[RMDB]
RNA sequence: GGGAACGACUCGAGUAGAGUCGAAAACGAGUGCAAUAAAGACGCGGUUGCCGAUCGGUAUGGAUGCCACCGUGACGGCUUAAUCACACAAGUGCCAACGAUAACGAGGCGCUCGCUAUUGCUGCGUAAAAGCGACGAUCGUUCGCGAUCGUCGCAAGCAUAUUUGUAUCUUCGGAUACAAAUAUGCAAAAGAAACAACAACAACAAC
Reactivity to 2A3 in 0.01 (KOAc 150mM, MgCl2 10mM, bicine 150mM(pH8.5), 24C), signal-to-noise 6, nucleotides 027 to 156: c030g020a040g060u070g020c030a040a070u070a110a210a030g080a050c050g000c020g020g030u050u100g000c010c020g040a060u020c010g030g050u130a110u140g100g070a110u130g090c030c010a020c000c020g020u030g080a080c040g000g010c000u030u170a060a060u120c020a010c000a010c020a160a060g020u010g040c010c010a100a040c070g080a090u110a250a030c060g010a070g030g000c020g000c020u020c030g010c010u020a030u050u110g010c020u040g000c030g040u060a020a050a060a060g010c000g000a000c000g000a000u000c000g020u060u060c160g010c010g080a000u000c000g000u010c010g000c000a000a000
Reactivity to DMS in 0.01 (KOAc 150mM, MgCl2 10mM, bicine 150mM(pH8.5), 24C), signal-to-noise 3, nucleotides 027 to 156: c020g000a100g000u010g020c030a120a110u000a100a100a070g000a070c020g010c020g010g010u000u000g010c020c010g000a090u000c040g020g020u000a090u000g000g010a140u000g010c090c050a070c010c020g010u020g030a120c110g020g030c030u000u010a070a070u000c030a060c030a050c070a110a050g030u000g000c000c020a080a120c050g010a120u000a060a120c040g000a240g010g000c020g020c020u000c010g030c040u000a120u000u000g040c010u010g000c010g000u000a070a070a090a150g000c000g020a020c040g020a020u010c000g030u000u010c300g040c030g020a000u000c010g000u000c000g030c000a000a040
The record gives the reactivity of an RNA of 207 nucleotides to 2A3 and DMS. The 2A3 profile rests on 5,842 reads. The reactions ran in a buffer of 150 mM KOAc, 10 mM MgCl2 and 150 mM bicine (pH 8.5), at 24 C.